[RMDB]
RNA sequence: GGGAACGACUCGAGUAGAGUCGAAAAAUUCAGUCACGGGCUGUAGCUAAGUCUCCAGAUCAAUUACGAAGAUGCCUUGAUCUCGGCCGGUCAGGCGGGUUAUUCGUAUCACUCAGGCCGACUUCCGCUGCUGGAAGACCUUCGGGUCUUCCAGCAGAAAAGAAACAACAACAACAAC
Reactivity to 2A3 in 0.01 (KOAc 150mM, MgCl2 10mM, bicine 150mM(pH8.5), 24C), signal-to-noise 1, nucleotides 027 to 126: a000u020u000c050a000g130u000c000a000c070g120g200g070c000u000g020u030a020g010c000u230a090a090g010u090c000u060c070c000a050g010a170u030c040a030a130u110u080a000c020g050a060a030g120a070u100g070c000c020u100u160g020a000u020c070u020c080g060g000c010c010g010g020u000c020a020g000g080c140g060g000g010u200u040a130u170u050c120g010u050a130u220c030a060c050u060c030a010g010g010c000c000g000a000c000u060u000c060c000g030
Chemical mapping of a 177-nucleotide RNA with 2A3. Conditions: 150 mM KOAc, 10 mM MgCl2 and 150 mM bicine (pH 8.5), 24 C. 2A3 adducts were read by reverse transcription with SuperScript II with manganese.